The record gives the reactivity of an RNA of 177 nucleotides to 2A3 and DMS.
DMS adducts were read by reverse transcription with MarathonRT.
The RNA was probed in 150 mM KOAc, 10 mM MgCl2 and 150 mM bicine (pH 8.5) at 24 C.
Values cover nucleotides 27 to 126.
It was measured as part of the RMDB libraries RFM100 and RFMREP.
2A3 adducts were read by reverse transcription with SuperScript II with manganese.
RNA sequence: GGGAACGACUCGAGUAGAGUCGAAAAGGCCACGCUGUGGUCCCCGAGGUCCCGGAGCUGGCCCUGCGGGGCCCGGCGCUCAGAAGUGAUGAAUUGAUCAGAUAGACGAGGCCGGGCUUGUCCCCGGCAUACGUGUGAGUUUCGACUCACACGUAUGAAAAGAAACAACAACAACAAC
Reactivity to 2A3 in 0.01 (KOAc 150mM, MgCl2 10mM, bicine 150mM(pH8.5), 24C), signal-to-noise 9, nucleotides 027 to 126: g020g000c020c000a020c030g300c200u270g020u040g060g010u030c000c000c010c000g010a050g000g000u050c050c050c020g080g030a100g020c220u100g020g000c020c000c010u100g120c020g000g000g000g000c000c000c000g010g000c090g160c010u000c000a070g020a130a020g070u030g030a030u020g050a080a300u230u210g020a040u050c010a010g140a240u110a040g050a040c030g010a010g000g000c010c000g020g010g000c020u040u060g040u070c000c000c000c010g020g020
Reactivity to DMS in 0.01 (KOAc 150mM, MgCl2 10mM, bicine 150mM(pH8.5), 24C), signal-to-noise 9, nucleotides 027 to 126: g010g010c000c010a030c030g010c180u030g010u010g000g010u010c000c000c020c020g010a070g000g000u000c030c010c040g010g010a130g010c140u010g000g000c120c010c010u000g020c040g000g000g000g010c010c000c010g010g000c000g010c020u000c020a040g010a220a090g010u000g010a050u000g010a160a190u040u030g010a060u000c010a030g000a130u020a100g010a230c080g000a020g000g000c000c000g000g000g000c020u000u010g000u010c040c000c000c080g010g000